Structure probing data (DMS and 2A3) for a 177-nucleotide construct. Values cover nucleotides 27 to 126. DMS adducts were read by reverse transcription with MarathonRT.
RNA sequence: GGGAACGACUCGAGUAGAGUCGAAAAAGCUCAGCUACGGCUGAGCAAAGCCUCAGACAUUCUUGUAUGUCGCGAAUUGAAGCGAUACCAGUCUGGAUGAGGCUGAAGCCAGUGUACGCACUGGCAAGCCUAAAUCACACUUCGGUGUGAUUUAGGCAAAAGAAACAACAACAACAAC
Reactivity to DMS in 0.01 (KOAc 150mM, MgCl2 10mM, bicine 150mM(pH8.5), 24C), signal-to-noise 3, nucleotides 027 to 126: a060g000c010u020c000a010g000c000u010a140c190g020g000c000u010g000a010g010c000a010a020a010g000c040c000u010c000a030g020a300c010a000u000u030c000u010u000g020u000a120u010g000u010c000g000c010g020a160a250u040u020g030a230a140g010c010g010a020u000a010c140c060a020g000u000c010u000g000g020a180u000g000a010g000g000c010u000g000a080a060g000c010c010a010g000u000g000u010a170c120g050c020a000c000u000g010g010c000a000a020
Reactivity to 2A3 in 0.01 (KOAc 150mM, MgCl2 10mM, bicine 150mM(pH8.5), 24C), signal-to-noise 8, nucleotides 027 to 126: a000g000c000u000c000a000g010c010u020a050c290g130g000c000u000g000a000g000c000a000a010a000g000c000c000u010c000a010g000a020c000a000u000u000c010u020u010g020u040a100u140g290u110c010g000c010g090a120a180u190u270g100a190a010g000c000g000a000u000a010c000c010a010g000u000c010u000g000g000a010u010g000a000g000g000c010u020g020a030a010g000c000c000a000g000u000g000u020a060c250g000c090a000c000u000g000g000c000a000a000
The RNA was probed in 150 mM KOAc, 10 mM MgCl2 and 150 mM bicine (pH 8.5) at 24 C.